[RMDB]
RNA sequence: GGGAACGACUCGAGUAGAGUCGAAAAGCGUAUCGGGGCGCUGCAGGAUAUGUGCCCGAGCACACCUUUGCCUCGAAAGUUCUUGCUUUUGCACAAGGAGCAGAUUACCUGCAGCAGGAUGUCGUGCCCGCGCUAGGCACUUCGGUGCCUAGCGCGGAAAAGAAACAACAACAACAAC
Reactivity to 2A3 in 0.01 (KOAc 150mM, MgCl2 10mM, bicine 150mM(pH8.5), 24C), signal-to-noise 1, nucleotides 027 to 126: g030c000g000u090a130u070c010g000g000g000g010c060g000c000u000g000c000a000g000g000a170u040a080u290g170u030g000c000c000c000g000a060g000c010a040c000a000c100c000u000u010u210g000c000c000u020c000g000a040a060a000g000u060u060c000u050u010g050c000u020u040u080u060g060c020a030c000a080a020g040g000a060g120c080a000g000a050u050u300a180c000c000u000g000c060a000g000c000a000g000g080a170u160g060u110c130g000u000g100c000

Chemical mapping of a 177-nucleotide RNA with 2A3. For 2A3, 377 sequencing reads were counted. Conditions: 150 mM KOAc, 10 mM MgCl2 and 150 mM bicine (pH 8.5), 24 C. The data come from the RNA Mapping Database (RMDB), library OK1LIB.